[RMDB]
RNA sequence: GGGAACGACUCGAGUAGAGUCGAAAAACUAUUUGUUCUAUAGCAAAUAAACCCGAAACACAGGAUAUAUUUGUUAUAUAUGCUUUGUGGAACACAGCUGUUAGGACGUGAGCCAUCAGGGUCCAAAGGAGUGAUUUAGUUUCGACUAAAUCACUCCAAAAGAAACAACAACAACAAC
Reactivity to DMS in 0.01 (KOAc 150mM, MgCl2 10mM, bicine 150mM(pH8.5), 24C), signal-to-noise 1, nucleotides 027 to 126: a250c200u010a000u000u000u000g020u000u010c190u010a070u050a040g000c000a000a050a010u000a000a130a140c000c010c000g020a180a140a110c040a040c040a040g010g010a020u020a000u000a020u000u070u010g000u050u050a050u020a000u000a050u000g030c050u000u000u020g020u010g000g000a120a130c050a030c100a050g000c130u000g000u000u000a010g040g070a000c070g050u000g010a030g000c020c100a000u000c050a040g030g000g020u020c010c020a060a220a140
Reactivity to 2A3 in 0.01 (KOAc 150mM, MgCl2 10mM, bicine 150mM(pH8.5), 24C), signal-to-noise 3, nucleotides 027 to 126: a020c040u020a040u040u040u070g050u070u030c120u150a130u160a100g020c040a000a030a000u020a040a190a080c010c010c010g020a090a110a000c010a000c010a010g000g030a000u010a000u000a050u060u100u120g110u200u000a020u010a020u000a000u050g120c010u100u180u080g010u020g040g000a050a030c050a010c010a070g010c020u070g000u110u080a020g000g040a020c060g100u120g070a000g020c000c010a030u030c000a030g050g060g020u030c000c000a050a050a080
Description: The record gives the reactivity of an RNA of 177 nucleotides to DMS and 2A3. Reactivities are given for positions 27 through 126. The reactions ran in a buffer of 150 mM KOAc, 10 mM MgCl2 and 150 mM bicine (pH 8.5), at 24 C. It was measured as part of the RMDB library OK1LIB. For 2A3, 1,758 sequencing reads were counted. The DMS profile rests on 1,865 reads.